This 170-nucleotide RNA was probed chemically with DMS and 2A3. Reactivities are given for positions 27 through 129. The RNA was probed in 150 mM KOAc, 10 mM MgCl2 and 150 mM bicine (pH 8.5) at 24 C.
RNA sequence: GGGAACGACUCGAGUAGAGUCGAAAAAUAGAGUAUCCUUAUAUCUCACAUGAAAAGAAAUUGAAUUCCUGUUGUAGAAUCGUUGAGCGCAACGUCGUACGUGCUGCUCUUCUUGCCGGUUCAUUUGUAACCCUCGUCUUCGGACGAGGGAAAAGAAACAACAACAACAAC
Reactivity to DMS in 0.01 (KOAc 150mM, MgCl2 10mM, bicine 150mM(pH8.5), 24C), signal-to-noise 2, nucleotides 027 to 129: a050u000a140g000a100g080u060a000u020c060c000u000u000a130u100a170u020c120u060c000a070c000a210u040g000a170a070a130a160g060a090a180a040u020u040g000a230a130u040u000c040c040u000g080u040u000g050u020a090g000a040a000u000c070g140u000u030g020a060g000c080g010c030a070a030c000g000u040c230g070u130a240c090g000u000g040c080u050g070c040u020c010u000u100c060u000u040g040c250c090g000g000u040u000c000a250u140u030u000g010u000a060a090
Reactivity to 2A3 in 0.01 (KOAc 150mM, MgCl2 10mM, bicine 150mM(pH8.5), 24C), signal-to-noise 1, nucleotides 027 to 129: a000u140a000g160a000g010u140a000u000c000c000u080u080a090u000a030u020c000u000c000a090c110a010u080g080a020a020a020a020g120a110a030a000u070u050g060a000a120u000u000c000c000u000g040u070u000g020u090a030g000a090a000u100c000g080u090u000g000a000g000c030g030c000a160a150c110g090u270c130g060u050a080c080g110u040g010c000u010g100c100u000c040u000u000c020u000u140g020c000c000g070g050u000u000c000a070u090u050u000g000u000a000a000
It was measured as part of the RMDB library 15KLIB. For DMS, 2,837 sequencing reads were counted.